[RMDB]
RNA sequence: GGGAACGACUCGAGUAGAGUCGAAAAAGAGCAUCUUCCUCUCCCUGGGUGGCGAAGGGUGUGCCAUGCUGGUGCACGUGGCAGAGUGCGAUGGCCAAGGCAUCGGAGGCGUGAUCCGACAUUUUUGUAAAACUAAGCACUUCGGUGCUUAGUUUUAAAAAGAAACAACAACAACAAC
Reactivity to DMS in 0.01 (KOAc 150mM, MgCl2 10mM, bicine 150mM(pH8.5), 24C), signal-to-noise 3, nucleotides 027 to 126: a060g000a090g010c080a050u000c080u000u000c010c010u010c060u000c030c010c020u010g010g010g010u010g000g000c060g020a110a080g010g000g010u000g020u000g010c020c030a090u000g020c060u000g010g040u010g010c020a170c030g020u000g020g030c030a070g020a100g010u000g020c090g000a070u010g000g000c020c040a040a080g010g020c030a040u000c040g020g020a110g020g010c020g000u000g010a090u000c020c020g000a090c200a070u000u000u000u000u000g010